Structure probing data (2A3 and DMS) for a 207-nucleotide construct. The DMS profile rests on 2,958 reads. The reactions ran in a buffer of 150 mM KOAc, 10 mM MgCl2 and 150 mM bicine (pH 8.5), at 24 C. The data come from the RNA Mapping Database (RMDB), library M2RFPK. Values cover nucleotides 27 to 156.
[RMDB]
RNA sequence: GGGAACGACUCGAGUAGAGUCGAAAAAUACAUACUCACACCGGUUGCUCAACAGGCUGUGUGGGACAAUAGAAUAACAAGGCUGUCAAUUUGAGCUUGACGGCUGCAAACCGAAUGGAGUGAAAUCGUAACCGGACUCACUUCGGUGAGUCCGGAACAUUAGUACUCUGUUCGCAGAGUACUAAUGAAAAGAAACAACAACAACAAC
Reactivity to 2A3 in 0.01 (KOAc 150mM, MgCl2 10mM, bicine 150mM(pH8.5), 24C), signal-to-noise 2, nucleotides 027 to 156: a000u160a010c030a020u140a040c000u000c000a030c000a010c020c080g140g050u050u060g010c040u020c100a050a140c020a130g150g000c030u010g000u000g030u030g030g030g000a000c040a060a050u070a060g170a110a060u130a120a050c030a140a030g040g000c010u000g000u000c000a000a000u020u090u300g040a030g080c000u000u010g000a020c000g000g040c030u040g000c000a000a140a040c000c010g110a080a090u130g110g060a010g050u130g070a070a060a110u180c110g050u030a010a060c000c000g000g000a000c010u000c000a000c010u000u060c100g020g000u010g020a000g000u020c000c000g010g000a000a000
Reactivity to DMS in 0.01 (KOAc 150mM, MgCl2 10mM, bicine 150mM(pH8.5), 24C), signal-to-noise 2, nucleotides 027 to 156: a070u020a080c050a180u000a060c050u000c010a060c000a070c010c050g060g030u000u000g000c050u000c090a090a130c070a120g010g000c020u000g020u010g000u010g030g000g010a130c070a070a090u000a070g000a110a090u010a100a150c050a090a120g000g010c000u020g000u000c070a030a070u000u000u000g030a160g000c300u000u000g020a040c000g050g000c000u000g020c090a020a090a080c000c020g000a050a140u000g000g000a060g050u000g020a030a040a100u000c070g000u000a090a140c020c030g020g010a020c030u010c000a040c000u000u020c300g060g010u000g020a030g000u000c000c020g000g000a010a020